The record gives the reactivity of an RNA of 177 nucleotides to DMS.
RNA sequence: GGGAACGACUCGAGUAGAGUCGAAAAUAAAAUCCCAACCUCCCUCCCUCGGUCGGUCGGUCCCUGCGUGCGUGCCUCCGGCCGGCCGGCCCUGCCUCCCUGCGUGCGUGCCUCCCUCCCAAAAAAAACCAAUUUCAUGAUUCGUCAUGAAAUUGGUAAAAGAAACAACAACAACAAC
Reactivity to DMS in 0.01 (KOAc 150mM, MgCl2 10mM, bicine 150mM(pH8.5), 24C), signal-to-noise 2, nucleotides 027 to 126: u000a060a060a140a130u000c000c000c000a210a250c080c040u000c000c010c010u000c010c030c070u000c080g010g030u000c020g010g000u000c010g010g010u000c020c040c000u000g010c080g020u000g000c140g010u010g000c040c080u010c020c080g020g010c010c020g000g000c000c000g010g000c020c020c050u000g010c020c010u000c050c010c010u000g000c100g010u010g030c040g020u000g000c030c020u000c020c000c000u000c000c000c000a000a000a000a060a040a030a050
The reactions ran in a buffer of 150 mM KOAc, 10 mM MgCl2 and 150 mM bicine (pH 8.5), at 24 C. For DMS the reverse transcriptase was MarathonRT. Reactivities are given for positions 27 through 126.